[RMDB]
RNA sequence: GGGAACGACUCGAGUAGAGUCGAAAAGUGGGUAAAAGACAUAAUAGGAAGCAAAUGCUUGGUUGUAACGAUCGAGAUAGAAUCUGUUGAUUUAAGCUGAAAGGCUGCAGACUUAUUAAAUGGGUGUUCUGCUGUAUGGCGUUCGCGCCUAAGCAGCCCAAUCCAGUCCGUUCGCGGACUGGAUUGGAAAAGAAACAACAACAACAAC
Reactivity to 2A3 in 0.01 (KOAc 150mM, MgCl2 10mM, bicine 150mM(pH8.5), 24C), signal-to-noise 1, nucleotides 027 to 156: g010u020g010g000g020u100a080a110a030a030g060a030c060a030u150a030a030u110a300g000g050a010a020g030c040a000a040a110u170g000c000u020u010g020g000u030u050g070u090a080a050c080g010a070u040c070g010a030g000a050u020a080g060a080a010u000c030u040g020u040u020g050a100u030u070u070a000a000g020c000u000g020a060a040a040g070g000c000u000g000c000a000g000a080c010u020u060a020u040u160a220a100a070u100g060g010g000u040g080u050u050c010u030g050c010u000g000u010a010u090g010g010c040g030u030u020c240g050c000g000c020c000u010a040a000g020c000a000g010c000

An RNA of 207 nucleotides, treated with 2A3 and read out base by base. Reactivities are given for positions 27 through 156. The reactions ran in a buffer of 150 mM KOAc, 10 mM MgCl2 and 150 mM bicine (pH 8.5), at 24 C. For 2A3, 554 sequencing reads were counted.